Overview:
Structure probing data (DMS) for a 207-nucleotide construct. The RNA was probed in 150 mM KOAc, 10 mM MgCl2 and 150 mM bicine (pH 8.5) at 24 C. The DMS profile rests on 1,569 reads.

RNA sequence: GGGAACGACUCGAGUAGAGUCGAAAAACAAACCACUGCUCAGUGAAAUAAAAGAGGAUACAAAGAAAUGAAAGAACAUUCCAUGCUCAUGGGUAGGAAGAAUCAAUAUCGUGAAAAAUGGCCAUACUGCCGAAGGUAAUUUAUAGAUUCAAUGCCAAAUAAAUCCCUACUUCGGUAGGGAUUUAUUAAAAGAAACAACAACAACAAC
Reactivity to DMS in 0.01 (KOAc 150mM, MgCl2 10mM, bicine 150mM(pH8.5), 24C), signal-to-noise 1, nucleotides 027 to 156: a130c020a060a110a150c060c010a040c010u010g000c020u000c050a090g030u000g000a040a140a140u020a060a120a130a080g010a070g020g000a170u000a120c070a060a080a080g020a090a100a080u020g000a120a060a090g010a150a090c000a120u000u000c030c000a100u000g000c030u030c030a070u000g010g000g000u000a090g060g000a050a030g000a030a020u000c000a100a090u000a010u000c000g030u000g000a040a090a060a080a080u010g000g020c010c040a120u010a060c110u000g000c000c000g000a050a040g000g010u000a050a030u000u000u000a180u000a050g010a120u000u000c020a080a080u000g020c000c030a020